[RMDB]
RNA sequence: GGGAACGACUCGAGUAGAGUCGAAAACCCAAAAAUUUUCCGGUGGCCACCCGCCCGGGCCACCGCAGCUCCACUCCACUCCUUCGGGACUGGUUUGGAGGAACAUAACAGGGCUAAAACAAAACAACCCUAAUCAGGCAUUCGUGCCUGAUUAGGGAAAAGAAACAACAACAACAAC
Reactivity to 2A3 in 0.01 (KOAc 150mM, MgCl2 10mM, bicine 150mM(pH8.5), 24C), signal-to-noise 1, nucleotides 027 to 126: c030c000c000a250a000a070a080a030u090u060u040u020c010c000g000g000u040g000g060c000c020a020c150c100c040g010c000c010c010g010g000g000c000c000a000c000c000g000c000a010g040c000u010c000c000a000c000u000c000c000a000c010u000c020c000u030u070c210g070g000g000a030c000u000g010g020u000u000u000g000g000a000g000g000a010a070c080a170u300a110a000c010a050g000g000g040c000u000a090a070a000a000c080a040a050a050a030c040a020a070